RNA sequence: GGGAACGACUCGAGUAGAGUCGAAAAAGUUACAAAUAUUUCAAUGCAGCAUACUUGCAUUGAGCUGCUAAGCACGAAGCAGUAAGUGGUUAUGUAUAUAGCGACUUUAGGAAUUGUUGCAGGCUGACAUAUAUACGAUGUUCGCAUCGUAUAUAUGAAAAGAAACAACAACAACAAC
Reactivity to DMS in 0.01 (KOAc 150mM, MgCl2 10mM, bicine 150mM(pH8.5), 24C), signal-to-noise 9, nucleotides 027 to 126: a100g000u010u010a120c160a140a120a070u000a010u000u000u000c000a010a010u000g000c000a020g010c280a140u010a100c190u010u000g010c010a000u000u000g000a010g000c010u000g000c000u000a050a130g010c040a040c060g000a040a020g000c000a010g010u000a020a020g030u000g010g010u000u000a020u000g010u010a060u010a030u000a020g000c010g000a010c010u000u000u000a020g010g010a090a080u000u000g010u010u000g020c030a140g010g010c100u000g010a250
Reactivity to 2A3 in 0.01 (KOAc 150mM, MgCl2 10mM, bicine 150mM(pH8.5), 24C), signal-to-noise 8, nucleotides 027 to 126: a000g080u120u100a080c060a040a120a030u030a020u020u030u020c010a000a000u010g000c000a010g010c050a090u080a250c080u090u010g000c000a000u000u010g000a010g000c000u010g000c000u010a140a030g030c020a020c060g030a020a000g000c010a000g000u010a010a010g010u040g090g010u070u010a020u040g190u040a100u050a000u010a300g000c040g080a010c000u020u030u030a050g050g060a080a060u060u060g120u130u050g030c020a020g090g060c040u050g020a030